Structure probing data (DMS and 2A3) for a 207-nucleotide construct. The data come from the RNA Mapping Database (RMDB), library M2RFPK. The reactions ran in a buffer of 150 mM KOAc, 10 mM MgCl2 and 150 mM bicine (pH 8.5), at 24 C. High 2A3 reactivity points to a flexible backbone, as in loops and unpaired stretches. The DMS profile rests on 4,245 reads.
RNA sequence: GGGAACGACUCGAGUAGAGUCGAAAACUGCGCGGGGCGGAAGCAUUAAAACCAUUCGAGCUAGUCAAUGCGUGGCGUGUCUCUCCGCAGCGUGUUGGCGAAUGUAAAGAGUGACUAAGCAUGUAGUGAGAGUGGGCCGUCUUCGGACGGCCCACAACAUCCUUAAGUACUUCGGUACUUAAGGAUGAAAAGAAACAACAACAACAAC
Reactivity to DMS in 0.01 (KOAc 150mM, MgCl2 10mM, bicine 150mM(pH8.5), 24C), signal-to-noise 2, nucleotides 027 to 156: c050u010g000c050g030c000g020g020g030g020c060g000g000a070a110g000c040a070u000u010a060a110a130a090c020c030a080u000u000c050g010a190g030c030u010a130g000u010c040a030a050u010g000c020g050u010g020g030c070g000u010g000u070c050u000c010u010c170c000g030c010a060g010c000g040u010g000u000u000g010g000c020g020a080a090u020g000u000a050a060a100g020a120g020u010g010a110c020u000a060a190g000c070a110u000g000u010a090g020u010g010a100g000a170g050u000g040g050g000c000c000g060u000c000u010u010c260g040g050a100c000g040g000c000c020c000a000c010a000a160
Reactivity to 2A3 in 0.01 (KOAc 150mM, MgCl2 10mM, bicine 150mM(pH8.5), 24C), signal-to-noise 3, nucleotides 027 to 156: c040u060g000c030g000c030g010g020g010g000c010g040g020a030a000g000c000a010u090u130a040a060a020a060c020c000a010u050u070c040g030a030g040c050u060a050g050u030c020a010a010u020g010c020g010u030g100g000c020g010u060g090u020c020u000c010u030c060c010g020c010a030g000c000g000u020g020u010u010g000g000c010g020a090a020u080g010u130a050a060a030g040a010g020u070g000a030c020u030a050a040g050c040a030u110g030u100a050g020u050g080a040g010a020g050u010g000g000g000c000c000g040u000c030u010u020c090g000g000a000c000g000g000c000c000c000a000c000a000a000